The record gives the reactivity of an RNA of 177 nucleotides to DMS and 2A3.
Conditions: 150 mM KOAc, 10 mM MgCl2 and 150 mM bicine (pH 8.5), 24 C.
DMS adducts were read by reverse transcription with MarathonRT.
Values cover nucleotides 27 to 126.
It was measured as part of the RMDB library OK2TST.
RNA sequence: GGGAACGACUCGAGUAGAGUCGAAAAGACCGGGAGGACACCGCUUACUCGUACAAAGUGCGCUUCACCCUAGCAGUAGGGGACAACCGUGUGUUGGACAUGGCCAGUACCUAUUUUGACAUCCGGGGUACGUUAAUGUAUUCGUACAUUAACGUACAAAAGAAACAACAACAACAAC
Reactivity to DMS in 0.01 (KOAc 150mM, MgCl2 10mM, bicine 150mM(pH8.5), 24C), signal-to-noise 9, nucleotides 027 to 126: g000a140c030c030g010g000g010a080g010g010a090c070a060c090c040g010c060u000u010a070c060u000c060g010u010a090c130a070a090a090g010u000g010c060g000c070u000u010c080a150c020c010c010u000a050g000c150a080g010u010a040g010g000g000g000a080c140a070a090c030c020g010u000g010u000g010u000u000g010g000a070c060a050u000g000g010c020c040a090g000u000a100c050c020u000a090u010u000u000u000g010a060c090a060u000c070c020g000g000g010
Reactivity to 2A3 in 0.01 (KOAc 150mM, MgCl2 10mM, bicine 150mM(pH8.5), 24C), signal-to-noise 5, nucleotides 027 to 126: g050a030c010c000g010g030g000a050g020g010a020c020a020c060c010g010c030u030u080a050c020u030c070g040u050a040c070a050a180a010g040u040g040c040g010c030u070u070c040a100c010c000c000u030a030g010c040a040g080u100a020g000g010g010g020a010c020a020a020c010c020g050u030g010u010g070u120u150g060g030a020c020a060u060g020g000c020c020a020g010u050a040c000c000u040a100u070u120u050u060g060a040c030a040u020c020c010g010g000g060